[RMDB]
This 177-nucleotide RNA was probed chemically with DMS and 2A3. DMS adducts were read by reverse transcription with MarathonRT. It was measured as part of the RMDB library OK1LIB. For DMS, 1,989 sequencing reads were counted. The reactions ran in a buffer of 150 mM KOAc, 10 mM MgCl2 and 150 mM bicine (pH 8.5), at 24 C.

RNA sequence: GGGAACGACUCGAGUAGAGUCGAAAAGGCGCGCGCGUCGUGUUCGCGCCCCGGUAGCGCGGCACGUCCCCAUUCGCCCGCCGCGGUAUCGCCCGCCGAAGUAUUAAACAGCGCCAGCGUCAGAUUAUCGUGGUCAUUUAUUCGUAAAUGACCACGAAAAAGAAACAACAACAACAAC
Reactivity to DMS in 0.01 (KOAc 150mM, MgCl2 10mM, bicine 150mM(pH8.5), 24C), signal-to-noise 2, nucleotides 027 to 126: g010g010c030g010c120g050c140g000c100g000u030c040g050u000g000u060u000c060g050c050g050c000c000c110c080g000g000u030a150g040c000g000c020g020g010c020a100c010g000u050c060c010c040c070a060u000u010c080g040c060c000c080g000c030c020g000c050g040g030u000a060u010c090g010c000c000c000g000c090c010g000a010a150g000u020a150u020u000a050a150a100c130a130g040c080g000c000c080a090g010c050g000u000c010a100g000a230u020u000a050
Reactivity to 2A3 in 0.01 (KOAc 150mM, MgCl2 10mM, bicine 150mM(pH8.5), 24C), signal-to-noise 2, nucleotides 027 to 126: g030g010c020g010c000g000c030g010c000g070u070c040g040u060g040u190u200c040g010c000g000c000c000c040c000g040g120u110a040g080c000g010c000g000g000c030a010c040g050u060c010c000c020c010a060u130u060c020g010c040c040c020g020c010c000g030c000g000g020u050a080u060c040g010c000c030c000g000c000c000g030a070a010g030u040a100u120u190a130a170a030c060a020g000c000g020c000c000a010g010c010g040u020c020a030g070a240u100u140a090